Source: RMDB library OK2TRN, as collected in RNAgym. Chemical mapping of a 177-nucleotide RNA with DMS and 2A3.
[RMDB]
RNA sequence: GGGAACGACUCGAGUAGAGUCGAAAAUUGGCUUAAUCAAUGAACAAGAUGAAAUGGACGAUGUAUUCGCUCGUUUCUUAAUUUCUCACGAAGCCGAAAAUCGUGAAUACCACGUCAUUUGGAAAGAUAACCCUUUUACUUUCGAGUAAAAGGGUUAAAAAGAAACAACAACAACAAC
Reactivity to DMS in 0.01 (KOAc 150mM, MgCl2 10mM, bicine 150mM(pH8.5), 24C), signal-to-noise 7, nucleotides 027 to 126: u010u000g000g010c070u010u010a100a100u000c120a080a090u000g000a070a100c230a090a100g000a090u010g000a010a020a010u000g010g010a030c000g010a030u010g000u010a130u000u000c010g020c040u000c020g020u000u000u000c000u000u000a070a100u010u000u000c030u010c050a100c250g010a050a060g010c010c030g010a030a050a050a090u010c030g000u000g000a120a120u000a160c150c020a040c040g000u010c130a120u000u000u010g010g000a090a080a080g000a160
Reactivity to 2A3 in 0.01 (KOAc 150mM, MgCl2 10mM, bicine 150mM(pH8.5), 24C), signal-to-noise 2, nucleotides 027 to 126: u040u030g020g000c010u050u080a050a040u220c040a030a170u170g000a040a030c040a070a040g100a160u090g020a000a010a000u030g010g000a000c000g010a020u060g090u300a250u090u000c000g000c000u000c000g010u020u020u000c000u050u010a030a070u030u040u020c010u020c030a030c090g060a040a030g030c020c010g020a040a040a000a010u100c000g010u000g030a050a040u100a240c040c030a010c010g000u010c090a100u020u060u210g080g020a100a070a000g090a070

Reactivities are given for positions 27 through 126. For 2A3, 1,651 sequencing reads were counted. The reactions ran in a buffer of 150 mM KOAc, 10 mM MgCl2 and 150 mM bicine (pH 8.5), at 24 C. DMS adducts were read by reverse transcription with MarathonRT.